[RMDB]
RNA sequence: GGGAACGACUCGAGUAGAGUCGAAAACUGGGCCCCAGCGGCUCGCCCCUCGGCGGGGCCGGGAGCCGCGCCAGUCGGAGCCCCUGGCUGAGGGCGGUCAGCCAGCUUCUCAGCGCCCAUCCCUCCGGCGCUAGUUAGAAUUCGUUCUAACUAGCGCAAAAGAAACAACAACAACAAC
Reactivity to DMS in 0.01 (KOAc 150mM, MgCl2 10mM, bicine 150mM(pH8.5), 24C), signal-to-noise 1, nucleotides 027 to 126: c020u010g020g000g000c060c030c020c050a270g060c050g000g000c000u010c000g000c050c000c000c040u010c110g020g000c120g060g000g010g000c080c300g000g040g000a000g010c040c000g000c030g010c050c090a010g000u000c110g010g010a170g000c000c000c020c000u030g010g030c000u000g000a020g010g000g030c030g020g010u000c050a020g000c000c010a080g000c060u020u050c000u000c050a150g010c020g000c040c000c000a050u070c020c000c000u020c040c050g000
Reactivity to 2A3 in 0.01 (KOAc 150mM, MgCl2 10mM, bicine 150mM(pH8.5), 24C), signal-to-noise 3, nucleotides 027 to 126: c010u020g000g010g020c040c010c000c020a020g000c010g010g000c000u020c020g030c000c010c020c000u100c100g300g020c120g010g010g000g030c000c010g140g040g030a010g020c000c000g000c000g010c010c030a040g050u110c020g010g040a050g030c000c010c020c010u050g050g000c010u010g000a040g000g060g010c020g020g030u060c010a010g040c000c000a010g000c000u240u070c020u020c040a030g020c010g000c010c010c000a050u050c010c000c000u010c020c020g030
An RNA of 177 nucleotides, treated with DMS and 2A3 and read out base by base.
The DMS profile rests on 1,757 reads.
The reactions ran in a buffer of 150 mM KOAc, 10 mM MgCl2 and 150 mM bicine (pH 8.5), at 24 C.